[RMDB]
RNA sequence: GGGAACGACUCGAGUAGAGUCGAAAAGUGCAGUUAUUGAAGAACGUGGAGGCGGACGUCAACGUAUUGUUGUCACUGAAAUUCCUUUCCAAGUGAAUAAGGCUCGUAUGAUUGAAAAAAUUGCAGACCAUGCUAAUGACUUCGGUCAUUAGCAUGGAAAAGAAACAACAACAACAAC
Reactivity to DMS in 0.01 (KOAc 150mM, MgCl2 10mM, bicine 150mM(pH8.5), 24C), signal-to-noise 3, nucleotides 027 to 126: g010u010g010c050a030g020u000u000a100u000u000g020a190a070g010a050a110c050g000u020g030g000a050g020g000c080g010g020a030c090g040u020c060a120a090c120g020u030a110u010u040g020u030u000g000u000c060a060c070u000g010a040a050a120u000u010c040c020u020u010u010c020c040a110a070g010u000g020a060a080u020a050a130g000g010c090u010c040g000u010a020u000g000a080u000u010g000a040a030a080a080a040a020u000u000g000c070a090g010a300
Reactivity to 2A3 in 0.01 (KOAc 150mM, MgCl2 10mM, bicine 150mM(pH8.5), 24C), signal-to-noise 3, nucleotides 027 to 126: g070u080g010c050a040g000u080u090a260u130u180g080a170a080g040a020a010c050g010u090g030g040a010g040g100c010g020g010a020c000g050u030c030a020a020c040g060u080a100u090u140g030u020u000g030u050c000a000c100u000g050a060a060a000u090u030c020c000u000u000u080c030c010a020a130g030u020g120a030a000u090a070a010g020g020c020u020c060g040u060a070u150g110a140u020u200g080a070a020a000a000a000a070u130u050g000c020a000g000a110
Chemical mapping of a 177-nucleotide RNA with DMS and 2A3. 2A3 adducts were read by reverse transcription with SuperScript II with manganese. For DMS the reverse transcriptase was MarathonRT.